[RMDB]
RNA sequence: GGGAACGACUCGAGUAGAGUCGAAAAGAUAUGGAUUUGGAGAACAGCCUAGAGACGUUGAAAUCGGAAACGAUGGAGUCUAUAGGCUGACCAAAUCCUAAGUCAAACGGAACCUUCGGGUUCCGAACAUACAGGAGAGGUUCGCCUCUCCUGUAUGAAAAGAAACAACAACAACAAC
Reactivity to 2A3 in 0.01 (KOAc 150mM, MgCl2 10mM, bicine 150mM(pH8.5), 24C), signal-to-noise 4, nucleotides 027 to 126: g040a030u100a060u180g000g000a000u000u000u000g070g000a230g080a300a110c000a010g010c000c000u020a030g000a010g000a030c030g150u300u060g020a050a040a000u010c020g010g020a080a030a040c020g000a000u010g020g040a020g010u010c000u010a030u010a000g000g000c000u000g000a000c000c000a000a000a000u000c000c000u000a070a020g030u030c050a090a040a120c000g000g010a000a000c020c000u080u180c300g110g000g000u000u000c000c000g000a020a020
Reactivity to DMS in 0.01 (KOAc 150mM, MgCl2 10mM, bicine 150mM(pH8.5), 24C), signal-to-noise 5, nucleotides 027 to 126: g010a030u010a300u010g010g000a000u000u000u010g000g010a170g010a140a150c010a010g010c000c010u000a000g010a030g010a010c000g020u010u000g000a090a120a020u000c000g000g000a120a090a190c010g010a010u000g000g010a090g000u000c000u000a070u000a010g010g000c000u010g000a020c000c000a000a010a000u000c000c000u000a010a060g000u010c040a080a130a240c030g000g000a000a010c000c010u000u000c190g020g000g010u000u000c000c000g000a040a120
An RNA of 177 nucleotides, treated with 2A3 and DMS and read out base by base. For 2A3 the reverse transcriptase was SuperScript II with manganese. For DMS, 6,050 sequencing reads were counted. The 2A3 profile rests on 8,391 reads. It was measured as part of the RMDB library TTRDEL. The RNA was probed in 150 mM KOAc, 10 mM MgCl2 and 150 mM bicine (pH 8.5) at 24 C.